[RMDB]
RNA sequence: GGGAACGACUCGAGUAGAGUCGAAAAGGAGGCUGAGGCACAAGAAUCACUUGAACCUGGGAGGUAGAGGUUUCAGUGAGCCAAGAUUGCGCCACUGUACUCCAGCAUGUGCCACAGAGCGAGACUCGUCGCUAAUUCCUUUCGAGGAAUUAGCGACAAAAGAAACAACAACAACAAC
Reactivity to 2A3 in 0.01 (KOAc 150mM, MgCl2 10mM, bicine 150mM(pH8.5), 24C), signal-to-noise 1, nucleotides 027 to 126: g030g010a020g000g040c030u020g030a000g040g020c040a020c010a030a020g010a130a050u080c010a020c040u130u110g010a000a000c000c000u010g030g210g050a100g050g070u090a030g000a010g000g080u030u030u050c040a010g000u000g030a020g000c040c080a070a030g040a040u060u160g000c040g020c010c000a040c030u010g000u040a200c020u020c010c010a010g000c020a090u180g030u100g130c010c000a050c010a040g020a000g000c040g000a010g020a110c060u000c190
Reactivity to DMS in 0.01 (KOAc 150mM, MgCl2 10mM, bicine 150mM(pH8.5), 24C), signal-to-noise 1, nucleotides 027 to 126: g010g070a020g000g000c010u010g020a040g030g000c020a020c060a050a030g000a100a150u000c030a000c020u000u000g000a030a020c030c010u010g030g000g020a050g000g020u000a090g050a050g010g000u000u000u000c080a030g010u020g010a070g010c140c100a140a130g000a150u000u020g050c020g030c000c060a080c020u010g000u020a050c040u010c020c000a140g020c080a040u000g010u000g010c010c020a120c020a000g000a070g000c090g000a070g010a150c130u000c100